Structure probing data (DMS) for a 177-nucleotide construct. Values cover nucleotides 27 to 126. The RNA was probed in 150 mM KOAc, 10 mM MgCl2 and 150 mM bicine (pH 8.5) at 24 C.
RNA sequence: GGGAACGACUCGAGUAGAGUCGAAAAUGAAACAUGGUUACCAUAUGGAUUGGCACAAGGUAGCCAUGAAAAGUGCCAAUCCAUAUAAAGCUGAGCGAUAGGAAAAACCUAAUGCUCAGCAAAAAAACAUUAUUGGUGUCUUCGGACACCAAUAAUGAAAAGAAACAACAACAACAAC
Reactivity to DMS in 0.01 (KOAc 150mM, MgCl2 10mM, bicine 150mM(pH8.5), 24C), signal-to-noise 1, nucleotides 027 to 126: u020g000a130a040a120c090a070u000g000g000u000u000a080c050c050a160u010a000u010g000g000a010u020u000g020g010c010a000c000a020a120g000g030u010a080g010c050c180a020u020g010a000a170a110a140g000u000g000c000c000a010a020u020c000c000a020u000a020u000a060a080a050g000c000u010g010a010g020c010g010a050u010a000g000g000a110a220a100a150a080c010c010u010a020a040u000g000c000u000c000a000g030c000a020a000a030a070a040a050a030